[RMDB]
Structure probing data (DMS and 2A3) for a 177-nucleotide construct.
Reactivities are given for positions 27 through 126.
2A3 adducts were read by reverse transcription with SuperScript II with manganese.
DMS adducts were read by reverse transcription with MarathonRT.
Conditions: 150 mM KOAc, 10 mM MgCl2 and 150 mM bicine (pH 8.5), 24 C.

RNA sequence: GGGAACGACUCGAGUAGAGUCGAAAAGAUAUGGACACGGGCUGACAUGCUGCAUCGGAAACGAUAUAGCAACAGCAGUUGUGUCCUAAGUCAAAGCUCAAUGCUGGGUUCGCCCAGCAUUGAGCAAUCAAUUUAAAACGUUCGCGUUUUAAAUUGAAAAAGAAACAACAACAACAAC
Reactivity to DMS in 0.01 (KOAc 150mM, MgCl2 10mM, bicine 150mM(pH8.5), 24C), signal-to-noise 3, nucleotides 027 to 126: g010a030u000a300u020g010g000a010c000a010c000g000g000g000c000u000g010a160c270a150u010g000c000u000g010c080a010u000c010g000g000a080a090a160c000g020a010u000a050u000a010g010c000a020a190c040a020g000c000a020g010u010u010g010u010g010u000c000c000u010a030a060g010u000c030a110a090a130g000c000u000c000a010a020u000g000c000u010g000g000g000u010u010c260g010c010c000c000a000g000c000a000u000u000g000a020g020c000a020a030
Reactivity to 2A3 in 0.01 (KOAc 150mM, MgCl2 10mM, bicine 150mM(pH8.5), 24C), signal-to-noise 2, nucleotides 027 to 126: g000a030u070a030u100g000g000a000c000a010c020g020g080g000c010u040g050a160c040a240u060g020c000u010g000c000a000u000c010g000g030a040a030a040c010g010a010u000a000u030a040g010c000a030a250c040a120g010c010a030g140u290u300g010u070g000u000c000c000u000a080a010g000u000c030a040a070a120g010c010u000c000a000a000u000g000c010u020g050g000g020u060u130c260g110c050c030c010a010g000c000a000u000u000g010a000g000c000a000a000